An RNA of 207 nucleotides, treated with 2A3 and read out base by base.
The data come from the RNA Mapping Database (RMDB), library OK3TST.
Reactivities are rounded to 0.1 and cut off at 0 and 3.

[RMDB]
RNA sequence: GGGAACGACUCGAGUAGAGUCGAAAAGGCACCAGGAGGUGAAGGCUCCAUAGUCCUCAGCCAUUUCUGUCUAUAGUUACUCCCAUGAUCUCUUCUGGUCUCAUUACUAUAAUCAGUAGCCACUAGCUAUCUAAAACUACUUAGAAUACCUAAAAACGUAAGUCCGUCAAUUCGUUGACGGACUUACAAAAGAAACAACAACAACAAC
Reactivity to 2A3 in 0.01 (KOAc 150mM, MgCl2 10mM, bicine 150mM(pH8.5), 24C), signal-to-noise 2, nucleotides 027 to 156: g050g010c010a020c050c060a080g010g030a040g000g030u140g010a030a020g080g000c010u010c040c040a040u120a000g040u070c000c000u010c020a010g010c000c040a080u090u020u000c050u040g100u000c010u060a110u050a110g070u040u060a120c090u010c000c000c010a010u070g030a050u000c020u010c000u110u000c010u100g000g000u030c000u010c060a090u130u170a050c070u080a000u170a240a150u190c030a010g010u100a020g030c040c000a050c070u000a030g000c010u010a010u100c040u040a000a000a160a150c090u140a050c000u060u000a020g060a020a080u200a220c060c090u250a070a030a260a000a020c020